An RNA of 207 nucleotides, treated with 2A3 and DMS and read out base by base. Reactivities are given for positions 27 through 156. The reactions ran in a buffer of 150 mM KOAc, 10 mM MgCl2 and 150 mM bicine (pH 8.5), at 24 C. For DMS, 2,460 sequencing reads were counted. 2A3 adducts were read by reverse transcription with SuperScript II with manganese.
RNA sequence: GGGAACGACUCGAGUAGAGUCGAAAAUUAAUGAAGCAAAUCUCCAAACGCCAACGAUGAGCGUUUCGCAAUCUCCGCUUAAGGCUUUUGCCGAGGCUGCUUGAGCCUUGUUACCAAAGAAAAGCCGAAAACCCAAAUGUCUUCGGACAUUUGGGAACAGUAAGAUGUUGUUCGCAACAUCUUACUGAAAAGAAACAACAACAACAAC
Reactivity to 2A3 in 0.01 (KOAc 150mM, MgCl2 10mM, bicine 150mM(pH8.5), 24C), signal-to-noise 2, nucleotides 027 to 156: u170u110a030a110u100g110a070a020g030c040a060a090a110u100c070u030c080c020a030a030a010c020g000c030c010a110a100c170g180a250u150g010a070g040c010g020u020u030u050c050g000c060a060a080u020c030u010c060c020g060c090u120u130a090a040g000g020c050u010u030u020u050g010c000c020g000a010g000g000c000u010g020c060u120u150g070a010g000c000c010u010u000g060u060u100a090c010c010a030a060a000g060a010a090a070a000g020c010c020g010a030a050a050a090c010c000c020a000a000a000u000g010u010c000u020u040c100g020g000a000c000a020u020u000u000g000g000g010a020a000
Reactivity to DMS in 0.01 (KOAc 150mM, MgCl2 10mM, bicine 150mM(pH8.5), 24C), signal-to-noise 1, nucleotides 027 to 156: u000u000a060a040u010g020a060a090g080c040a040a080a090u000c040u010c020c020a090a060a060c030g020c010c040a130a170c100g000a140u020g010a120g020c020g040u010u000u010c040g000c060a130a080u010c000u000c050c050g030c030u050u000a170a150g010g010c020u000u000u010u050g010c050c040g000a090g050g020c030u000g010c160u000u010g000a110g010c020c000u020u000g010u000u010a150c120c050a060a080a130g010a060a030a030a080g020c000c010g020a050a000a050a170c000c000c000a000a010a000u000g000u000c000u000u010c300g030g000a010c000a030u000u010u020g010g020g000a000a000